[RMDB]
RNA sequence: GGGAACGACUCGAGUAGAGUCGAAAACGGUUUACAGGGGUAGUCUCAUCAAUGCAUUACAAGCUUUAUGAUCUUUUGCCUCCAGGUAAAUUGAAAAAGGCAAUUUGUUUGGCCGAAGGGGAAGGAAGGACACAGAUAUCUUCGGAUAUCUGUGUCCAAAAGAAACAACAACAACAAC
Reactivity to 2A3 in 0.01 (KOAc 150mM, MgCl2 10mM, bicine 150mM(pH8.5), 24C), signal-to-noise 4, nucleotides 027 to 126: c000g010g040u050u060u060a040c060a040g000g030g020g010u000a030g020u000c030u000c040a030u010c030a040a100u210g000c000a010u060u210a140c040a110a040g000c000u050u090u040a090u070g050a070u050c020u020u100u060u070g080c000c010u050c010c020a040g030g070u020a020a040a040u040u110g080a100a020a030a000a000g030g000c010a030a030u040u060u040g100u020u030u040g030g000c030c050g020a050a040g060g000g000g020a060a030g080g030a100a080
Reactivity to DMS in 0.01 (KOAc 150mM, MgCl2 10mM, bicine 150mM(pH8.5), 24C), signal-to-noise 2, nucleotides 027 to 126: c120g030g010u000u000u010a040c090a090g020g000g040g000u000a000g020u000c030u020c000a020u000c070a030a040u000g020c030a050u040u020a090c150a100a100g000c010u000u010u000a020u010g000a060u010c020u000u030u010u000g020c000c020u020c020c070a040g010g020u010a010a010a020u000u010g010a040a050a080a120a120g010g020c010a000a000u020u020u000g010u000u000u010g000g030c280c040g000a160a110g000g000g000g020a040a070g030g000a110a110
The record gives the reactivity of an RNA of 177 nucleotides to 2A3 and DMS. The data come from the RNA Mapping Database (RMDB), library OK1LIB. The RNA was probed in 150 mM KOAc, 10 mM MgCl2 and 150 mM bicine (pH 8.5) at 24 C. For DMS, 4,131 sequencing reads were counted. For 2A3, 2,757 sequencing reads were counted. 2A3 adducts were read by reverse transcription with SuperScript II with manganese.